RNA sequence: GGGAACGACUCGAGUAGAGUCGAAAAAAACGAGAUAGCGAGGGAACCUUUGACUAGAGAGGUGAACCGCGAAAUAGAAUUCUGGUAUGUAUUUACAUGGCGUGUCUGUUCGCAGUGUACUUACGAGAAUAAAGAUAGACUAAGCAUGUAGCGCCUAGUCCUGUAUUCGGUUCGCCGAAUACAGGACAAAAGAAACAACAACAACAAC
Reactivity to 2A3 in 0.01 (KOAc 150mM, MgCl2 10mM, bicine 150mM(pH8.5), 24C), signal-to-noise 1, nucleotides 027 to 156: a000a000a010c050g000a040g000a050u040a010g010c060g050a210g030g010g020a040a090c000c020u000u010u040g010a040c120u100a020g020a010g000a010g110g010u020g010a010a010c000c000g000c000g050a000a000a000u140a010g060a050a060u070u030c020u010g020g000u040a120u100g010u010a030u040u080u000a050c030a040u060g050g030c010g000u050g020u060c050u040g020u010u090c040g000c040a040g040u040g030u090a030c030u090u010a010c020g030a000g000a100a000u190a130a040a030g010a050u060a000g020a000c010u040a020a150g020c010a040u080g030u080a000g020c000g030c060c030u000a050
Structure probing data (2A3) for a 207-nucleotide construct. Values cover nucleotides 27 to 156. Conditions: 150 mM KOAc, 10 mM MgCl2 and 150 mM bicine (pH 8.5), 24 C. It was measured as part of the RMDB library RSTRND.